[RMDB]
The data come from the RNA Mapping Database (RMDB), library OK3TST. Structure probing data (2A3) for a 207-nucleotide construct. The reactions ran in a buffer of 150 mM KOAc, 10 mM MgCl2 and 150 mM bicine (pH 8.5), at 24 C.
RNA sequence: GGGAACGACUCGAGUAGAGUCGAAAAUUGCGCCUGAAGCGAUCAAGGCUGCAGUGAGCUGAGAUGGUGCCACUGCACUCCAGCCUUGGUGCCAGAGUAAGACUGUCUCAAAAAAACAAAAAAGAAAGAAAGAAAGAAAACAUACUUUUUUAGAGGGCUAUCAUGCGUUGUUCGCAACGCAUGAUAGAAAAGAAACAACAACAACAAC
Reactivity to 2A3 in 0.01 (KOAc 150mM, MgCl2 10mM, bicine 150mM(pH8.5), 24C), signal-to-noise 2, nucleotides 027 to 156: u040u060g020c030g030c000c080u080g050a120a030g000c040g040a030u020c040a020a010g030g000c030u070g000c020a050g000u030g070a130g010c040u090g010a100g030a230u240g040g050u130g030c030c000a080c000u030g000c010a030c120u060c070c020a010g020c030c010u020u000g020g000u020g000c040c010a020g000a010g040u040a010a050g010a090c030u040g010u010c010u030c050a080a120a000a000a000a000a010c140a040a050a000a030a000a020g090a040a030a000g110a050a090a020g120a000a110a090g050a000a040a010a060c050a020u290a210c050u110u050u050u030u020u020a090g100a140g060g040g000